Chemical mapping of a 177-nucleotide RNA with 2A3. Source: RMDB library OK1LIB, as collected in RNAgym.

[RMDB]
RNA sequence: GGGAACGACUCGAGUAGAGUCGAAAACUGUUACUCCAGCGUGACAUCAAGGGUGGCGGCGUCCACGAAGGCCAGCAUGCGCGCCCGAUGAUGCCACCCCCGCUGAACUGAGCGACGAUCCGCGGGCCGUCCCAUGGACCUUCGGGUCCAUGGGACGAAAAGAAACAACAACAACAAC
Reactivity to 2A3 in 0.01 (KOAc 150mM, MgCl2 10mM, bicine 150mM(pH8.5), 24C), signal-to-noise 2, nucleotides 027 to 126: c010u050g050u080u010a030c050u080c000c000a020g050c020g050u060g000a040c010a090u020c100a120a040g010g000g090u060g030g040c040g030g000c070g030u010c000c000a060c060g090a130a110g020g030c050c170a070g060c020a080u280g010c050g000c000g060c040c000c000g000a120u230g000a000u000g000c000c000a010c040c000c020c020c000g060c000u010g000a070a050c070u130g040a030g070c080g080a070c020g050a040u000c020c000g000c030g000g000g000c030
Notes:
Conditions: 150 mM KOAc, 10 mM MgCl2 and 150 mM bicine (pH 8.5), 24 C. 2A3 adducts were read by reverse transcription with SuperScript II with manganese.